RNA sequence: GGGAACGACUCGAGUAGAGUCGAAAACUCGUAGAACACGAGCGCGUACGGAUGCGUCUUCAGCGGCUGGAGCGCGGCGUCGCGCUGCUUCGGCUUCGGCGGCAGGAAACCCGCGAACGUGAAGGCAGGACUAUUAGGAGUUCGCUCCUAAUAGUCCAAAAGAAACAACAACAACAAC
Reactivity to 2A3 in 0.01 (KOAc 150mM, MgCl2 10mM, bicine 150mM(pH8.5), 24C), signal-to-noise 2, nucleotides 027 to 126: c020u010c020g080u100a070g050a270a030c040a010c050g020a010g000c010g000c000g040u180a010c020g020g060a190u040g020c030g130u120c020u050u010c020a080g030c080g300g000c140u010g010g000a020g010c020g000c000g000g020c010g020u020c010g000c010g010c010u010g000c000u030u040c140g080g000c000u020u000c010g190g000c000g050g000c040a060g080g280a070a090a070c010c000c010g020c020g010a030a020c020g000u030g050a100a020g120g000c110a070
Reactivity to DMS in 0.01 (KOAc 150mM, MgCl2 10mM, bicine 150mM(pH8.5), 24C), signal-to-noise 4, nucleotides 027 to 126: c010u000c030g020u010a120g010a120a200c050a050c030g000a020g010c010g020c020g020u010a040c030g010g000a130u000g020c020g010u000c020u000u000c020a060g020c240g020g000c080u000g000g000a020g000c010g020c010g020g000c030g010u000c020g010c010g020c010u000g000c010u000u010c110g050g020c020u000u000c020g000g040c020g000g000c110a110g010g010a050a120a120c190c010c000g010c020g000a030a030c020g000u000g020a160a080g000g000c190a130
Source information: Structure probing data (2A3 and DMS) for a 177-nucleotide construct. The 2A3 profile rests on 6,517 reads. The RNA was probed in 150 mM KOAc, 10 mM MgCl2 and 150 mM bicine (pH 8.5) at 24 C. It was measured as part of the RMDB library OK2TRN.